[RMDB]
RNA sequence: GGGAACGACUCGAGUAGAGUCGAAAAGGAACCGGGACUGAUUCAUAAACCAAUUAACCUGCGUUUGAACCACAUCAUGUGGUAUCUGUUGCUAUUUGCGUUGAGUAUCUGGUUGCAACACCAUAUCACACAAGACUAACUUCGGUUAGUCUUGUGUAAAAGAAACAACAACAACAAC
Reactivity to 2A3 in 0.01 (KOAc 150mM, MgCl2 10mM, bicine 150mM(pH8.5), 24C), signal-to-noise 1, nucleotides 027 to 126: g020g040a000a000c000c000g000g030g030a000c020u060g030a060u150u120c040a090u200a150a040a020c000c020a000a010u070u050a020a030c050c050u080g020c050g050u000u150u210g000a010a000c020c000a010c050a100u290c050a060u270g000u020g060g000u030a220u020c030u010g100u100u140g040c010u030a070u060u100u080g010c060g010u010u100g100a020g040u040a120u050c010u020g030g050u000u090g010c000a020a000c010a040c060c000a030u120a100u230c040
Reactivity to DMS in 0.01 (KOAc 150mM, MgCl2 10mM, bicine 150mM(pH8.5), 24C), signal-to-noise 3, nucleotides 027 to 126: g000g020a030a060c020c000g000g000g020a070c090u000g010a080u000u020c090a090u010a110a080a090c120c060a050a060u000u000a060a110c080c060u000g010c140g030u010u000u010g010a070a060c010c020a020c010a130u020c230a120u030g010u000g010g010u000a050u000c060u000g000u020u000g000c030u000a080u000u000u000g010c110g020u000u000g010a090g000u010a080u010c060u010g010g010u000u000g000c070a070a060c120a100c050c030a060u010a040u000c130